[RMDB]
RNA sequence: GGGAACGACUCGAGUAGAGUCGAAAAGAUAUGGAUCAUGGUGUCAGCGUCCUAUUCUUGGAUUUAUGGUCACUCGGAAACGAGUGAGCCAUUGUCAGAAUAGGACGCUGACACGUGAUCCUAAGUCCUGAUAAACACUGUUCGCAGUGUUUAUCAGAAAAGAAACAACAACAACAAC
Reactivity to DMS in 0.01 (KOAc 150mM, MgCl2 10mM, bicine 150mM(pH8.5), 24C), signal-to-noise 3, nucleotides 027 to 126: g000a150u010a300u010g010g010a010u000c000a010u000g040g030u000g000u000c000a010g020c000g010u000c000c000u000a000u000u000c000u000u000g020g010a040u000u010u000a000u000g020g010u000c000a010c000u000c000g010g010a140a110a270c000g020a030g020u000g000a090g010c000c000a010u000u000g010u000c000a030g010a020a010u000a010g000g000a000c000g010c000u000g000a000c000a000c000g010u000g010a010u000c000c000u000a020a100g000u000c030